[RMDB]
RNA sequence: GGGAACGACUCGAGUAGAGUCGAAAAUCCUAAGUCCUCGAGAACCGAGAUCGACAUGCUUUGAAAAAAUUCCGUAUCGGAAACGAUACGGACCGCAGCUAAGCAACAGCGAUCUCUCAGUAUCGAGGAUAUGGAAAAAGUGAAGGUUCGCCUUCACCUUUUACCGACGAUUCGUCGUCGGUAAAAGAAAAGAAACAACAACAACAAC
Reactivity to DMS in 0.01 (KOAc 150mM, MgCl2 10mM, bicine 150mM(pH8.5), 24C), signal-to-noise 2, nucleotides 027 to 156: u000c010c000u000a040a230g000u000c000c000u000c020g030a090g060a250a230c180c300g010a020g010a030u010c010g020a050c080a300u000g000c010u000u000u000g000a000a080a160a110a060a110u010u000c010c000g030u010a000u010c000g000g000a200a080a160c010g000a010u000a000c000g000g030a000c160c080g000c290a080g000c030u000a070a070g050c040a030a040c100a140g000c020g010a020u000c010u000c010u000c030a110g010u000a120u010c010g000a010g010g010a010u000a030u000g040g000a040a080a100a090a070g020u000g000a010a020g000g020u000u000c220g020c010c000u000u010c000a000c010
Reactivity to 2A3 in 0.01 (KOAc 150mM, MgCl2 10mM, bicine 150mM(pH8.5), 24C), signal-to-noise 5, nucleotides 027 to 156: u020c010c000u020a070a040g040u010c010c010u010c000g020a010g010a020a000c010c010g000a000g000a010u000c000g150a200c030a100u060g010c010u090u010u070g100a160a160a050a050a060a080u130u000c000c010g000u000a000u000c000g030g060a090a060a080c010g000a000u000a000c010g000g000a010c010c030g140c050a110g030c020u040a000a000g000c010a010a070c040a170g060c010g010a000u000c000u000c000u000c000a000g000u000a000u000c000g020a010g000g010a000u000a000u010g020g020a030a080a010a050a000g010u010g010a010a000g050g010u070u190c200g120c020c000u000u000c000a000c000

The record gives the reactivity of an RNA of 207 nucleotides to DMS and 2A3. The data come from the RNA Mapping Database (RMDB), library RNAMAK. Reactivities are given for positions 27 through 156. For DMS, 2,464 sequencing reads were counted.